[RMDB]
RNA sequence: GGGAACGACUCGAGUAGAGUCGAAAACGUCGUGAACUAGCGACAAUGCAUUAGGUCCAUCGUUAUCUAACCGAAACAUCGUGACUAGUUAUAGAAUAGAACCAGGAGAGGGCGCUGGCAAACAAAGACGGAUUGUAUUAUUCGUAGUACGGUUCGUAAAAGAAACAACAACAACAAC
Reactivity to DMS in 0.01 (KOAc 150mM, MgCl2 10mM, bicine 150mM(pH8.5), 24C), signal-to-noise 9, nucleotides 027 to 126: c110g010u010c030g010u010g010a080a060c060u010a060g010c080g010a050c060a070a060u020g010c060a060u010u010a110g010g000u000c040c050a090u020c090g010u010u020a050u020c080u020a090a070c040c030g000a110a090a100c080a040u010c050g010u010g000a090c020u000a030g000u010u010a110u020a070g010a060a070u020a060g010a090a090c040c040a060g000g010a070g010a060g000g000g010c040g010c030u000g000g000c060a050a060a060c120a040a080a080g000
Reactivity to 2A3 in 0.01 (KOAc 150mM, MgCl2 10mM, bicine 150mM(pH8.5), 24C), signal-to-noise 9, nucleotides 027 to 126: c040g010u010c010g020u030g050a050a030c030u010a020g010c000g040a010c000a010a030u060g000c010a030u020u060a020g000g020u000c020c010a050u030c060g040u030u050a060u030c030u030a010a040c020c010g020a020a020a010c020a040u050c030g040u040g040a040c010u010a010g030u030u030a070u030a030g070a050a030u070a030g040a030a020c010c010a010g000g020a050g000a020g010g010g000c010g000c000u000g000g000c000a010a030a010c030a010a090a010g110

An RNA of 177 nucleotides, treated with DMS and 2A3 and read out base by base. For 2A3, 68,581 sequencing reads were counted.